[RMDB]
RNA sequence: GGGAACGACUCGAGUAGAGUCGAAAAACGGAUAGAUUCGUCUAUCCGUGCAUCUCAUAACAGACAGAGAAACUCUGCUAAGAUCUCACUUAGAUAAAGAGAAGAGAGUCGAGUUCGCUCGACUCAAGGAGGAUACUAUAUUCGUAUAGUAUCCUCCAAAAGAAACAACAACAACAAC
Reactivity to 2A3 in 0.01 (KOAc 150mM, MgCl2 10mM, bicine 150mM(pH8.5), 24C), signal-to-noise 8, nucleotides 027 to 126: a000c000g000g000a000u000a000g010a010u030u050c160g020u010c100u000a000u000c000c000g000u000g000c010a080u000c010u000c020a080u130a160a090c050a060g220a050c020a010g070a010g060a210a140a100c050u010c000u010g020c010u020a020a010g020a130u040c050u020c090a060c030u030u030a030g050a190u170a210a160a010g030a010g010a110a030g120a020g000a000g020u000c000g000a000g000u050u060c160g010c050u000c000g000a000c000u000c010a000a020
Reactivity to DMS in 0.01 (KOAc 150mM, MgCl2 10mM, bicine 150mM(pH8.5), 24C), signal-to-noise 8, nucleotides 027 to 126: a010c000g000g000a010u000a000g000a030u010u020c180g020u000c000u000a000u000c000c000g010u000g010c160a120u000c010u000c010a110u010a090a110c160a080g010a120c050a050g010a080g000a130a130a110c070u000c010u000g000c030u000a020a020g000a060u010c050u000c090a060c020u000u000a030g010a090u010a040a050a050g010a020g000a120a140g000a170g000a020g010u000c000g010a010g010u000u010c180g020c000u000c000g010a010c000u000c010a030a050